[RMDB]
RNA sequence: GGGAACGACUCGAGUAGAGUCGAAAACUCCCUCUCCUUGUCGGUGAACCCGCUCUUGUGAGGCCUCUUCCCAGGUCCGGAGUCGACCUCCAUCUGAUCCGUCCGGGGCCUCUUCGCCGGGGGAGCCCUAGUAAGUGUUGUUCGCAACACUUACUAGAAAAGAAACAACAACAACAAC
Reactivity to DMS in 0.01 (KOAc 150mM, MgCl2 10mM, bicine 150mM(pH8.5), 24C), signal-to-noise 3, nucleotides 027 to 126: c150u000c000c000c010u000c050u000c020c020u000u000g030u000c050g020g000u000g010a230a190c030c020c020g020c080u010c090u000u010g030u010g020a030g010g000c010c000u010c030u010u000c040c030c010a130g010g000u010c060c170g000g000a050g020u010c130g020a090c110c010u010c010c040a100u010c130u000g000a050u000c020c040g000u000c140c080g010g010g010g010c010c010u010c000u000u000c040g010c300c000g000g020g000g000g020a230g010c260c060
Reactivity to 2A3 in 0.01 (KOAc 150mM, MgCl2 10mM, bicine 150mM(pH8.5), 24C), signal-to-noise 2, nucleotides 027 to 126: c010u010c000c000c000u050c000u020c000c010u060u070g070u110c030g000g020u030g040a050a040c000c010c010g090c050u070c050u150u200g090u060g040a010g010g010c000c000u010c020u080u040c000c020c020a010g030g000u020c070c060g070g000a030g030u030c040g070a110c030c000u000c010c010a060u030c050u090g030a070u010c020c010g060u000c010c050g040g000g000g000c000c010u010c020u020u050c000g000c020c000g000g010g010g000g020a000g020c000c000
Record summary:
This 177-nucleotide RNA was probed chemically with DMS and 2A3. DMS adducts were read by reverse transcription with MarathonRT. The RNA was probed in 150 mM KOAc, 10 mM MgCl2 and 150 mM bicine (pH 8.5) at 24 C. The 2A3 profile rests on 3,140 reads.